Notes:
Chemical mapping of a 177-nucleotide RNA with DMS and 2A3. The reactions ran in a buffer of 150 mM KOAc, 10 mM MgCl2 and 150 mM bicine (pH 8.5), at 24 C. Values cover nucleotides 27 to 126. For 2A3, 194,179 sequencing reads were counted.
RNA sequence: GGGAACGACUCGAGUAGAGUCGAAAACGAGGAGUACAGAAUAUUCAUGAGGGAUGUCAAUUACACACCUACAUAAUGUGUAAUUGUGGUCAUAUGUAGGUGACCAGCUCGUGGGUAUUGUAUUCAGGCGUCACGAUGAUUUCGAUCAUUGUGGUGCAAAAGAAACAACAACAACAAC
Reactivity to DMS in 0.01 (KOAc 150mM, MgCl2 10mM, bicine 150mM(pH8.5), 24C), signal-to-noise 9, nucleotides 027 to 126: c060g010a140g020g010a020g020u000a010c020a090g020a120a040u000a010u010u000c010a010u000g000a020g000g010g010a110u040g010u050c010a010a010u000u000a010c010a010c010a020c130c120u030a110c300a100u050a140a170u010g010u000g000u000a000a010u000u000g010u000g000g000u000c000a010u000a070u040g020u030a090g010g020u000g010a000c000c010a110g010c000u000c000g030u000g000g000g010u000a010u000u000g000u000a010u000u000c010a130g010
Reactivity to 2A3 in 0.01 (KOAc 150mM, MgCl2 10mM, bicine 150mM(pH8.5), 24C), signal-to-noise 9, nucleotides 027 to 126: c060g030a070g170g000a010g000u010a010c010a010g300a180a030u010a000u010u020c000a000u010g010a010g020g070g040a050u170g170u190c010a010a010u030u050a010c010a000c010a010c020c050u160a110c090a130u300a160a090u090g010u000g010u020a030a030u030u030g020u050g020g000u010c020a010u070a060u240g250u170a080g200g030u010g000a000c000c000a020g030c000u000c000g010u000g000g000g000u000a010u010u020g000u000a010u010u020c020a030g140

For DMS, 53,340 sequencing reads were counted. 2A3 adducts were read by reverse transcription with SuperScript II with manganese.